Chemical mapping of a 177-nucleotide RNA with DMS. The DMS profile rests on 1,011 reads. Conditions: 150 mM KOAc, 10 mM MgCl2 and 150 mM bicine (pH 8.5), 24 C. For DMS the reverse transcriptase was MarathonRT. It was measured as part of the RMDB library M2PK90.
[RMDB]
RNA sequence: GGGAACGACUCGAGUAGAGUCGAAAAUUGUGGUCAAGACCUUGGCGUAGUAUCCAAGGUUGUCAAGGUUCCUAUUGACUUAACAAUGAUUGAGUUUAUGUUAUGGUGUAAGGUUGGACAGGGGAAAUCCCCGAAUUUGAUUCGUCAAAUUCGGGGAAAAAGAAACAACAACAACAAC
Reactivity to DMS in 0.01 (KOAc 150mM, MgCl2 10mM, bicine 150mM(pH8.5), 24C), signal-to-noise 1, nucleotides 027 to 126: u000u000g040u000g000g030u000c040a060a050g000a030c000c010u000u000g000g010c240g030u010a180g030u010a200u010c030c030a010a040g020g000u010u000g000u000c070a070a090g000g010u000u000c070c030u000a100u010u000g020a030c010u000u000a050a050c010a040a060u000g000a120u000u000g000a120g010u010u000u010a050u000g000u000u010a080u010g020g010u000g010u010a010a030g000g020u000u000g010g000a070c080a080g010g000g000g000a060a090a150